[RMDB]
RNA sequence: GGGAACGACUCGAGUAGAGUCGAAAACGUGCCAUGUUCGCAUGGCACGAAAAAAAGGAAACAGGAAGGCAUCGGCGCACGAUGUAACAAGCGCAAAAUAAAAAACAUUUCACUUCGGUGAAAUGAAGAACGUAUUCUUCUUCGGAAGAAUACGUUCAAAAGAAACAACAACAACAAC
Reactivity to 2A3 in 0.01 (KOAc 150mM, MgCl2 10mM, bicine 150mM(pH8.5), 24C), signal-to-noise 2, nucleotides 027 to 126: c010g010u020g020c000c000a000u010g030u080u040c190g000c140a010u020g000g010c030a000c020g010a000a000a000a000a000a000a000g130g050a070a100a010c050a030g040g040a030a020g060g020c000a020u020c010g020g000c020g020c050a080c090g020a000u040g030u150a050a030c080a120a020g040c030g000c000a110a080a030a010u270a030a100a010a010a010a010c020a000u020u000u020c010a010c010u020u040c170g070g010u000g000a000a000a000u000g010a060a030
Reactivity to DMS in 0.01 (KOAc 150mM, MgCl2 10mM, bicine 150mM(pH8.5), 24C), signal-to-noise 2, nucleotides 027 to 126: c000g010u000g000c010c000a000u000g000u010u010c140g030c010a010u000g000g000c000a010c000g010a010a000a070a160a050a040a060g020g000a050a040a050c110a040g000g000a050a060g000g010c010a020u000c000g010g010c060g000c040a030c030g000a020u000g000u010a030a040c180a020a170g000c050g020c050a110a100a080a090u000a010a020a040a070a050a090c010a010u000u000u000c000a020c000u010u000c140g020g000u000g000a000a000a010u000g000a060a060

The record gives the reactivity of an RNA of 177 nucleotides to 2A3 and DMS. 2A3 adducts were read by reverse transcription with SuperScript II with manganese. The reactions ran in a buffer of 150 mM KOAc, 10 mM MgCl2 and 150 mM bicine (pH 8.5), at 24 C.